[RMDB]
RNA sequence: GGGAACGACUCGAGUAGAGUCGAAAACAAGGUCUAUGAAGCAAUCGUUCGCGGCGACGACACGUUCGAGGCGGGCAUUCCGGAGAGCUUCAACGUUCUCGUCAAGGAAAUGCGUUCGCUCGGCCUAAUAGCGAAAAUGAUUCGUCAUUUUCGCUAUAAAAGAAACAACAACAACAAC
Reactivity to DMS in 0.01 (KOAc 150mM, MgCl2 10mM, bicine 150mM(pH8.5), 24C), signal-to-noise 6, nucleotides 027 to 126: c080a150a060g000g010u000c020u010a130u010g010a080a080g000c090a090a090u000c090g020u000u000c030g030c050g010g040c070g020a060c070g010a080c110a070c100g000u000u000c040g010a090g010g010c020g010g000g000c020a080u000u000c020c010g010g000a030g000a030g010c010u000u010c300a070a100c240g000u000u000c010u000c010g010u010c090a100a100g000g000a020a040a060u000g000c030g010u010u000c020g010c030u010c080g000g000c020c030u000a080
Reactivity to 2A3 in 0.01 (KOAc 150mM, MgCl2 10mM, bicine 150mM(pH8.5), 24C), signal-to-noise 4, nucleotides 027 to 126: c030a010a040g050g000u030c030u080a150u210g060a050a000g020c050a030a080u040c070g070u070u040c040g020c030g130g030c020g040a020c020g020a020c040a020c140g040u070u060c050g030a030g020g070c010g010g020g010c040a030u050u000c010c020g000g020a020g010a010g020c000u160u130c080a040a020c080g020u030u000c010u010c020g090u070c050a120a040g070g010a050a040a040u070g030c040g060u070u050c030g000c020u020c020g030g010c020c000u070a080

An RNA of 177 nucleotides, treated with DMS and 2A3 and read out base by base. The RNA was probed in 150 mM KOAc, 10 mM MgCl2 and 150 mM bicine (pH 8.5) at 24 C. Reactivities are given for positions 27 through 126. The data come from the RNA Mapping Database (RMDB), library OK2TST.